[RMDB]
RNA sequence: GGGAACGACUCGAGUAGAGUCGAAAAGAUAUGGAGCAGGACAGACAUGCCUGGCAUCGGAAACGAUGCGAGGCAACAGCUGUCUGCUCCUAAGUCAAACAAAGCACGCGUUCGCGCGUGCUUUGAAGCUAACAUAGGACUUCGGUCCUAUGUUAGCAAAAGAAACAACAACAACAAC
Reactivity to DMS in 0.01 (KOAc 150mM, MgCl2 10mM, bicine 150mM(pH8.5), 24C), signal-to-noise 2, nucleotides 027 to 126: g000a020u000a070u000g000g010a010g010c010a020g040g010a010c000a020g030a110c150a160u000g030c000c000u000g000g000c010a010u000c000g000g000a040a040a060c000g010a010u000g020c000g000a000g020g010c020a010a020c250a170g000c000u000g000u020c010u010g020c000u010c000c000u000a000a080g000u010c000a140a130a300c010a000a000a000g000c000a030c000g010c020g000u000u020c260g020c000g010c000g040u000g000c000u000u000u000g000a090a120
Reactivity to 2A3 in 0.01 (KOAc 150mM, MgCl2 10mM, bicine 150mM(pH8.5), 24C), signal-to-noise 1, nucleotides 027 to 126: g020a020u000a020u070g000g000a000g040c020a020g090g300a040c010a010g030a040c090a170u300g000c000c010u030g200g000c000a000u030c000g000g000a060a010a010c010g000a010u070g000c030g060a020g010g000c030a050a040c050a010g010c000u000g010u000c000u010g000c010u000c000c000u000a000a010g000u000c020a120a040a060c010a020a010a000g000c000a000c010g060c010g070u120u290c300g000c010g000c000g180u010g000c000u000u000u000g000a000a000